Source: RMDB library OK2TST, as collected in RNAgym.
This 177-nucleotide RNA was probed chemically with 2A3 and DMS.
Reactivities are rounded to 0.1 and cut off at 0 and 3.
The reactions ran in a buffer of 150 mM KOAc, 10 mM MgCl2 and 150 mM bicine (pH 8.5), at 24 C.
For 2A3 the reverse transcriptase was SuperScript II with manganese.
[RMDB]
RNA sequence: GGGAACGACUCGAGUAGAGUCGAAAACUAGAGUGAUACUAAAAGAUAUCAAAAGUCUUAAGAAGGUCUCAAGUAUCGUGGGGAGUCCAAUAAUUCAUUACUCAAUAGAUGGGACAGAGAUUUAUGGGGAACAGAAUUUAUUCGUAAAUUCUGUUCCAAAAGAAACAACAACAACAAC
Reactivity to 2A3 in 0.01 (KOAc 150mM, MgCl2 10mM, bicine 150mM(pH8.5), 24C), signal-to-noise 2, nucleotides 027 to 126: c000u010a040g030a010g160u090g020a000u020a030c010u080a010a000a300a000g060a090u020a000u120c010a000a060a210a080g060u040c040u170u200a210a140g080a010a070g170g010u000c000u000c000a060a040g020u020a020u090c010g020u110g000g050g000g010a040g050u030c050c060a030a050u130a120a060u060u050c010a060u090u100a060c030u020c050a030a050u040a050g100a090u090g000g000g040a040c020a030g080a010g000a050u040u080u120a090u200g120g020
Reactivity to DMS in 0.01 (KOAc 150mM, MgCl2 10mM, bicine 150mM(pH8.5), 24C), signal-to-noise 2, nucleotides 027 to 126: c020u000a090g030a090g010u000g010a070u000a030c040u010a040a180a120a060g000a090u000a050u000c070a040a170a100a200g020u010c030u000u000a080a170g000a120a140g010g000u000c010u000c070a090a070g010u000a020u000c040g020u000g000g010g000g000a070g000u000c020c050a070a100u010a050a090u000u010c040a080u010u000a080c040u000c040a050a080u010a080g000a100u000g000g000g010a030c050a080g010a050g000a130u010u000u010a050u020g020g010